[RMDB]
RNA sequence: GGGAACGACUCGAGUAGAGUCGAAAAGAAAGAAAGAAUCUCGUGCUGUGACCCUUUAGAGGGAAGCACUUUCUGUUGUCUGAAAACAAAGAAUGUGCAUCCUUUCAGAGGGUUACUCUUUGAGAAACGGUCGUAGCUGUUUCGACAGCUACGACCGAAAAGAAACAACAACAACAAC
Reactivity to 2A3 in 0.01 (KOAc 150mM, MgCl2 10mM, bicine 150mM(pH8.5), 24C), signal-to-noise 2, nucleotides 027 to 126: g100a000a000a000g130a050a070a000g060a000a100u010c060u020c070g010u010g020c200u000g010u000g080a000c000c000c030u000u000u000a100g000a000g010g020g000a000a000g020c000a000c040u000u010u000c000u000g300u000u000g040u000c230u190g090a080a110a000a010c000a000a000a000g000a000a000u050g000u000g000c050a000u080c000c010u050u300u050c000a000g000a000g000g000g000u000u000a000c000u020c010u030u170u300g020a020g000a070a120a000
An RNA of 177 nucleotides, treated with 2A3 and read out base by base. 2A3 adducts were read by reverse transcription with SuperScript II with manganese. The RNA was probed in 150 mM KOAc, 10 mM MgCl2 and 150 mM bicine (pH 8.5) at 24 C.